[RMDB]
RNA sequence: GGGAACGACUCGAGUAGAGUCGAAAAAGCAUGUCGCUAGAGAUCUAGCACAUGCACGAUCUCAUGUGAUGCAUCAGGUACGUACGCGAUGAGAGAUCUCUACACUAGCACGAUAGUACCUGCUAGGCGCAGUGUAAUGGUUCGCCAUUACACUGCGAAAAGAAACAACAACAACAAC
Reactivity to 2A3 in 0.01 (KOAc 150mM, MgCl2 10mM, bicine 150mM(pH8.5), 24C), signal-to-noise 4, nucleotides 027 to 126: a000g020c010a020u030g010u150c160g010c030u000a000g000a030g040a170u200c010u010a000g000c000a010c000a020u000g000c010a020c030g070a090u000c010u010c010a040u130g100u100g170a200u100g030c020a060u060c050a060g050g050u040a040c050g050u040a020c080g020c070g120a070u070g030a050g000a020g030a100u030c020u000c020u090a090c070a060c130u060a020g060c040a020c130g070a060u060a160g010u050a050c050c030u000g010c010u040a020g010g050
Reactivity to DMS in 0.01 (KOAc 150mM, MgCl2 10mM, bicine 150mM(pH8.5), 24C), signal-to-noise 4, nucleotides 027 to 126: a110g010c000a000u000g010u000c220g020c010u000a020g000a300g010a090u010c000u000a030g020c010a030c030a010u000g010c000a100c210g000a100u000c000u010c000a080u030g020u000g030a170u010g020c050a060u000c040a080g000g000u000a030c040g010u010a070c080g000c030g010a070u000g010a040g030a040g000a020u000c040u000c010u000a110c130a090c030u000a050g000c030a040c110g010a120u000a100g000u000a080c020c020u000g000c100u010a030g010g010